[RMDB]
The data come from the RNA Mapping Database (RMDB), library OK1LIB. The record gives the reactivity of an RNA of 177 nucleotides to 2A3 and DMS. DMS adducts were read by reverse transcription with MarathonRT. The reactions ran in a buffer of 150 mM KOAc, 10 mM MgCl2 and 150 mM bicine (pH 8.5), at 24 C. The DMS profile rests on 8,971 reads.
RNA sequence: GGGAACGACUCGAGUAGAGUCGAAAAGAAAGAAGAAAAACCGUGUGAACUAUGAUGGCUUUACAAAGCUCGACGAAAAGAAACACUUGAUUCUACCGAAAGCAAGAGCUGCUGCAUACGGAAGAAAAAUUAUGACUACCUUCGGGUAGUCAUAAUUAAAAGAAACAACAACAACAAC
Reactivity to 2A3 in 0.01 (KOAc 150mM, MgCl2 10mM, bicine 150mM(pH8.5), 24C), signal-to-noise 5, nucleotides 027 to 126: g120a010a070a000g090a040a030g070a020a060a000a000a000c020c040g000u000g000u000g030a050a120c040u040a100u220g060a110u080g040g000c010u050u030u070a080c110a040a090a000g000c020u020c020g060a080c030g040a020a020a020a080g030a000a090a010c060a040c090u100u160g050a100u150u000c010u060a050c000c040g060a110a020a010g000c010a070a000g010a000g040c010u010g010c010u010g000c010a010u020a030c010g020g020a030a030g050a050a130a010
Reactivity to DMS in 0.01 (KOAc 150mM, MgCl2 10mM, bicine 150mM(pH8.5), 24C), signal-to-noise 5, nucleotides 027 to 126: g000a080a090a130g000a120a090g010a100a030a080a090a080c050c000g000u000g010u000g010a090a130c140u030a070u030g000a080u010g000g010c010u000u000u010a120c110a080a030a120g000c020u000c030g010a300c240g000a040a050a050a030g000a040a040a080c090a150c190u020u020g010a100u000u000c000u000a140c090c000g000a100a070a030g010c030a100a070g020a070g010c010u000g010c040u000g010c010a020u010a050c030g000g000a070a090g010a020a040a070